Source: RMDB library OK2TRN, as collected in RNAgym. Structure probing data (DMS and 2A3) for a 177-nucleotide construct. For DMS the reverse transcriptase was MarathonRT. The DMS profile rests on 4,530 reads.
[RMDB]
RNA sequence: GGGAACGACUCGAGUAGAGUCGAAAAAGAAGACGCGCUCUGCUAGAUGAAACAAAGGCGUGGUUUAGAGUAGGUAUAACAGGCACUUUAGCAGUGGCCGUGACGACCCGGUAUGAGGUAGACAAUAAUCGAUGAAGUGAUUCGUCACUUCAUCGAUAAAAGAAACAACAACAACAAC
Reactivity to DMS in 0.01 (KOAc 150mM, MgCl2 10mM, bicine 150mM(pH8.5), 24C), signal-to-noise 4, nucleotides 027 to 126: a090g000a120a140g010a080c040g000c110g020c020u010c020u010g000c030u010a050g000a060u000g000a120a080a110c180a040a080a100g000g010c040g030u000g020g010u000u010u000a060g010a100g000u000a030g000g020u000a060u010a070a040c090a090g000g000c010a060c060u000u000u010a060g010c050a040g030u000g000g020c030c030g000u010g000a120c090g010a090c040c010c020g010g020u000a060u000g000a050g010g020u010a050g000a090c110a060a080u000a080
Reactivity to 2A3 in 0.01 (KOAc 150mM, MgCl2 10mM, bicine 150mM(pH8.5), 24C), signal-to-noise 3, nucleotides 027 to 126: a000g080a000a010g090a010c010g060c000g000c020u010c000u030g000c010u040a050g000a110u140g100a070a150a060c100a080a110a050g070g000c060g050u070g020g070u050u060u110a040g020a030g020u140a040g000g070u100a080u030a200a000c020a030g060g000c000a020c090u080u050u070a000g010c030a020g020u110g080g010c020c000g030u030g010a020c050g040a040c030c010c000g000g020u190a140u090g080a060g030g050u030a030g020a040c030a110a090u190a160
Source information
Conditions: 150 mM KOAc, 10 mM MgCl2 and 150 mM bicine (pH 8.5), 24 C.